[RMDB]
RNA sequence: GGGAACGACUCGAGUAGAGUCGAAAAGUUAGUUUCUCCCGUCAAACAGCACUAGUUGCCGCUUGAUCCUUAAGGAGAUGGGGUGAUAUCAGCCUUAUCAACCAAAUGAUACGCGGAGUCUGGAAGGGGUCAAUUUAGAUUUCGAUCUAAAUUGACCAAAAGAAACAACAACAACAAC
Reactivity to DMS in 0.01 (KOAc 150mM, MgCl2 10mM, bicine 150mM(pH8.5), 24C), signal-to-noise 5, nucleotides 027 to 126: g010u010u000a080g010u010u000u000c020u000c010c000c030g020u030c130a070a050a150c060a030g000c100a060c030u000a110g010u020u020g020c010c010g020c020u010u030g010a060u000c010c090u000u010a080a110g020g010a270g000a010u000g010g000g020g000u010g030a150u030a130u040c170a260g000c010c000u010u000a000u000c010a060a090c040c030a040a100a050u010g000a010u000a050c170g000c030g000g000a070g000u010c010u010g000g010a100a070g020g000
Reactivity to 2A3 in 0.01 (KOAc 150mM, MgCl2 10mM, bicine 150mM(pH8.5), 24C), signal-to-noise 8, nucleotides 027 to 126: g020u030u050a020g020u020u040u020c040u010c010c000c020g030u070c060a100a100a100c020a020g060c070a010c070u080a080g150u140u170g070c000c020g020c050u070u190g070a010u020c000c010u070u070a120a100g020g000a030g000a020u020g010g010g000g010u070g050a070u080a070u300c070a060g010c000c000u000u010a020u020c020a030a150c010c000a020a040a050u050g000a000u030a070c020g000c000g020g020a020g000u000c000u010g050g040a060a050g070g020

Source information: An RNA of 177 nucleotides, treated with DMS and 2A3 and read out base by base. The data come from the RNA Mapping Database (RMDB), libraries RFM100 and RFMREP.